[RMDB]
RNA sequence: GGGAACGACUCGAGUAGAGUCGAAAAGAUAUGGAUUCGUCGGGAGUCUUAACGGUCGGAAACGACCGGGAGGACGACGAUCGAGCGAAUCCUAAGUCAAACCCAUUACCGUUCGCGGUAAUGGGAAGCUAAACCGGUAGUUCGCUACCGGUUUAGCAAAAGAAACAACAACAACAAC
Reactivity to DMS in 0.01 (KOAc 150mM, MgCl2 10mM, bicine 150mM(pH8.5), 24C), signal-to-noise 2, nucleotides 027 to 126: g010a060u000a280u000g000g000a000u000u000c000g010u000c000g000g000g010a040g050u000c000u020u050a120a120c000g010g010u000c000g000g010a090a060a090c050g020a010c000c010g000g010g010a060g000g000a000c000g000a090c240g010a020u010c000g010a090g010c000g000a000a000u000c000c000u000a020a090g000u000c020a120a120a160c010c000c000a020u000u000a000c000c000g010u010u010c250g060c030g010g000u000a000a000u000g000g000g010a000a010
Reactivity to 2A3 in 0.01 (KOAc 150mM, MgCl2 10mM, bicine 150mM(pH8.5), 24C), signal-to-noise 1, nucleotides 027 to 126: g030a010u020a000u090g000g000a000u000u010c000g020u030c000g000g000g000a020g010u000c020u030u050a050a030c000g010g000u030c010g030g040a040a020a060c000g010a010c030c030g000g000g000a060g050g000a010c000g010a020c020g020a010u000c020g020a040g140c010g000a000a010u000c000c000u010a070a000g030u010c050a110a050a290c020c000c000a000u000u000a010c010c000g050u010u090c300g000c000g210g020u010a000a000u000g000g010g010a010a000